[RMDB]
RNA sequence: GGGAACGACUCGAGUAGAGUCGAAAAGAUAGAGGUUGGGUUUCCCCCCUUUUAUAGAUGGUCACGCACCUGGGUGUUACAAAGUUGUAUGUGGCAUGAAUACUUUUUGUAAUGAUUGAUUAAAUGCAACCAAGUCUUGAUUCGUCAAGACUUGGUUAAAAGAAACAACAACAACAAC
Reactivity to DMS in 0.01 (KOAc 150mM, MgCl2 10mM, bicine 150mM(pH8.5), 24C), signal-to-noise 2, nucleotides 027 to 126: g010a140u010a100g010a050g010g040u010u000g020g000g010u000u000u010c010c010c000c050c010c030u010u000u010u010a110u010a080g000a120u000g000g000u010c060a090c150g020c070a060c040c000u000g010g020g020u000g030u010u000a020c030a010a040a070g020u000u000g000u000a010u000g010u000g000g020c050a020u010g010a140a080u000a040c010u000u000u000u010u000g000u000a030a050u010g010a120u000u020g010a090u000u000a030a090a100u000g010c190

Chemical mapping of a 177-nucleotide RNA with DMS. Reactivities are rounded to 0.1 and cut off at 0 and 3. It was measured as part of the RMDB library OK2TST. The reactions ran in a buffer of 150 mM KOAc, 10 mM MgCl2 and 150 mM bicine (pH 8.5), at 24 C.